Structure probing data (DMS and 2A3) for a 177-nucleotide construct. For DMS the reverse transcriptase was MarathonRT. The reactions ran in a buffer of 150 mM KOAc, 10 mM MgCl2 and 150 mM bicine (pH 8.5), at 24 C. For DMS, 3,200 sequencing reads were counted. It was measured as part of the RMDB library TTRDES.
[RMDB]
RNA sequence: GGGAACGACUCGAGUAGAGUCGAAAAAAGAUAUGGAUGACAGCAAGAUCCUUCGCUGCGAAGAACGGUGCUCGGAAACGAGCACCGGGAGCAGCGAAGGAUUGAUGACCUGUCAUCCUAAGUCAAACAUGCAAUCAAAGUUCGCUUUGAUUGCAUGAAAAGAAACAACAACAACAAC
Reactivity to DMS in 0.01 (KOAc 150mM, MgCl2 10mM, bicine 150mM(pH8.5), 24C), signal-to-noise 4, nucleotides 027 to 126: a100a080g000a050u000a300u030g010g010a010u010g000a020c000a000g000c040a120a180g000a010u000c010c000u000u000c000g020c010u000g010c000g010a140a180g000a130a190c030g000g000u000g020c000u000c030g010g010a120a110a160c000g030a010g010c000a000c000c000g030g000g000a150g010c010a000g000c010g000a000a000g000g000a000u000u000g010a070u020g000a090c300c000u000g000u000c010a010u000c000c000u010a010a080g010u010c030a100a150a170
Reactivity to 2A3 in 0.01 (KOAc 150mM, MgCl2 10mM, bicine 150mM(pH8.5), 24C), signal-to-noise 1, nucleotides 027 to 126: a000a040g100a060u120a060u090g010g020a010u000g010a000c000a000g050c030a100a300g030a030u000c000c010u000u000c010g060c010u000g000c050g210a300a070g040a080a020c020g070g040u000g020c020u020c020g070g050a090a080a070c000g030a040g010c010a000c000c000g000g000g000a010g010c000a000g040c040g000a000a000g000g000a000u020u000g000a010u000g010a010c000c000u010g000u000c000a000u000c000c000u010a030a020g030u010c030a020a040a030